The record gives the reactivity of an RNA of 177 nucleotides to 2A3.

RNA sequence: GGGAACGACUCGAGUAGAGUCGAAAAUCUUAGAAACAGAAAAUGUCAAUUGGCCUGAAUUUCUUAAAUCAGUUAAUGAGUUUGGCUUACCUCCAGAAGAUCUCGUUAUAGGAUUAAAACCCAAAGAGUUCAGGAUUACCUUCGGGUAAUCCUGAACAAAAGAAACAACAACAACAAC
Reactivity to 2A3 in 0.01 (KOAc 150mM, MgCl2 10mM, bicine 150mM(pH8.5), 24C), signal-to-noise 3, nucleotides 027 to 126: u000c000u000u090a010g040a050a150a000c020a000g090a020a090a030a040u120g040u060c030a050a260u030u090g000g000c010c010u040g130a120a120u140u210u060c030u090u150a130a180a210u140c010a110g060u060u170a030a030u160g020a020g100u050u090u090g010g000c000u000u060a060c000c020u050c030c030a040g000a180a070g030a210u030c010u000c010g010u030u040a020u020a050g020g000a000u000u010a020a000a030a140c020c000c120a010a160a000g110a030
It was measured as part of the RMDB library OK1LIB.